[RMDB]
Notes
This 207-nucleotide RNA was probed chemically with 2A3 and DMS. The 2A3 profile rests on 997 reads. The RNA was probed in 150 mM KOAc, 10 mM MgCl2 and 150 mM bicine (pH 8.5) at 24 C. Reactivities are given for positions 27 through 156. For DMS the reverse transcriptase was MarathonRT.
RNA sequence: GGGAACGACUCGAGUAGAGUCGAAAACUUCUUGCUGCAUGGCAGAAGGCUGAAGAGCAAGAGAGCUUGAGAAAGCAAGAGAGGGCUGAGCUCGUUUUUUAUAACAACCCACUCCUGCGAUAACAUUAAUCCACCGAUGGGAGCAGAACCCUCAGGAGGUAAUUUUAAUGUUCGCAUUAAAAUUACCAAAAGAAACAACAACAACAAC
Reactivity to 2A3 in 0.01 (KOAc 150mM, MgCl2 10mM, bicine 150mM(pH8.5), 24C), signal-to-noise 2, nucleotides 027 to 156: c020u040u010c010u060u140g030c030u060g010c040a110u100g010g000c000a000g040a070a010g040g000c020u010g020a020a010g000a010g050c000a070a000g050a010g010a000g040c000u050u030g040a060g050a140a050a020g010c040a070a020g020a000g010a010g050g040g000c090u100g020a010g040c000u020c070g000u020u050u020u000u050u080a230u070a090a050c050a030a070c000c000c010a030c020u010c030c000u030g010c020g060a060u060a080a020c020a030u120u210a080a030u000c050c060a050c040c030g080a100u080g010g000g010a010g000c010a000g030a060a090c010c000c010u020c030a020g000g070a030
Reactivity to DMS in 0.01 (KOAc 150mM, MgCl2 10mM, bicine 150mM(pH8.5), 24C), signal-to-noise 1, nucleotides 027 to 156: c050u000u000c010u000u030g020c000u000g010c060a150u000g040g080c080a080g000a060a080g010g020c020u020g000a040a110g020a060g000c010a080a120g020a110g000a040g020c060u000u000g000a160g010a140a130a120g000c020a080a050g000a120g000a110g040g010g000c020u010g000a080g010c040u000c030g000u000u000u000u000u000u000a050u000a070a080c030a070a060c000c000c000a150c020u030c030c000u000g000c080g020a230u020a090a130c000a050u000u000a090a170u030c010c040a090c020c020g000a060u000g020g000g020a140g000c070a120g010a100a210c010c000c030u010c040a110g000g000a230